Chemical mapping of a 177-nucleotide RNA with 2A3 and DMS. It was measured as part of the RMDB library OK2TRN. The 2A3 profile rests on 3,238 reads.
RNA sequence: GGGAACGACUCGAGUAGAGUCGAAAACGGGACAUAUUGAUUUGAUAAUCCUCCGCCUGCUGGUGGAAAUAACAACAAGCAGCCACAAUUUCCUCUAUCGCUUGCGGAAAACGCGCUUCAGGUGAAACCUUCAAUCUAGGUUCGCCUAGAUUGAAGGAAAAGAAACAACAACAACAAC
Reactivity to 2A3 in 0.01 (KOAc 150mM, MgCl2 10mM, bicine 150mM(pH8.5), 24C), signal-to-noise 3, nucleotides 027 to 126: c040g000g030g050a030c040a040u260a060u100u190g110a200u110u090u210g100a100u100a170a040u040c010c030u010c000c030g030c000c000u120g050c050u080g020g000u030g040g040a040a050a050u140a030a040c080a010a000c020a080a000g100c050a010g030c030c000a050c020a060a050u020u040u030c000c000u020c000u090a100u150c040g020c050u020u070g000c000g010g000a000a100a040a090c040g030c010g020c020u060u050c050a010g080g010u080g070a100a050a060
Reactivity to DMS in 0.01 (KOAc 150mM, MgCl2 10mM, bicine 150mM(pH8.5), 24C), signal-to-noise 3, nucleotides 027 to 126: c100g010g010g020a090c070a060u000a060u000u000g010a110u010u000u010g000a110u010a070a150u020c070c090u000c010c020g010c030c030u000g020c080u020g020g020u000g000g000a040a030a030u000a070a070c120a040a060c090a070a080g010c080a020g020c020c050a060c100a080a110u000u000u000c010c010u000c070u000a080u000c080g000c050u000u010g000c030g000g000a050a050a070a080c130g000c060g010c080u000u000c060a060g000g010u010g010a070a090a120
For DMS, 2,508 sequencing reads were counted. For 2A3 the reverse transcriptase was SuperScript II with manganese. Conditions: 150 mM KOAc, 10 mM MgCl2 and 150 mM bicine (pH 8.5), 24 C. Values cover nucleotides 27 to 126.